[RMDB]
RNA sequence: GGGAACGACUCGAGUAGAGUCGAAAAGGUAGGGCAUUCGUGCCCUACCACACCUCUAAGCAGAUUGGCGAGGACCACGUCGCGGCCCACGUUUACCAACAACUACUCUCUCCUUCGGGAGAGAGAACUAUGGGAUAACGUUCGCGUUAUCCCAUAGAAAAGAAACAACAACAACAAC
Reactivity to 2A3 in 0.01 (KOAc 150mM, MgCl2 10mM, bicine 150mM(pH8.5), 24C), signal-to-noise 3, nucleotides 027 to 126: g000g010u000a000g000g020g000c010a020u020u070c150g090u040g000c000c000c000u000a000c000c000a000c000a000c000c000u000c070u080a060a070g060c030a020g050a300u080u130g050g020c040g030a100g000g040a070c020c030a050c100g120u100c050g000c050g020g020c000c000c020a050c040g020u010u080u090a230c030c010a030a070c020a000a050c030u140a090c000u000c000u000c000u000c010c000u010u060c180g090g010g000a000g000a000g010a000g000a020a000
Reactivity to DMS in 0.01 (KOAc 150mM, MgCl2 10mM, bicine 150mM(pH8.5), 24C), signal-to-noise 3, nucleotides 027 to 126: g000g010u000a000g000g000g020c010a060u000u020c210g020u000g000c010c010c010u000a000c000c000a050c150a040c020c010u000c110u000a110a080g000c080a060g000a100u000u000g020g020c020g020a100g030g020a140c060c040a040c100g000u010c070g010c050g000g010c030c000c020a170c080g000u010u000u000a130c010c020a050a060c140a070a070c150u000a160c000u000c000u000c000u000c000c000u000u020c150g000g020g010a000g000a000g010a000g000a010a090
Structure probing data (2A3 and DMS) for a 177-nucleotide construct. For DMS, 2,680 sequencing reads were counted. For 2A3 the reverse transcriptase was SuperScript II with manganese. For 2A3, 4,195 sequencing reads were counted. Values are in units of 0.01, from 0 to 300, in steps of 10. It was measured as part of the RMDB library M2PK50.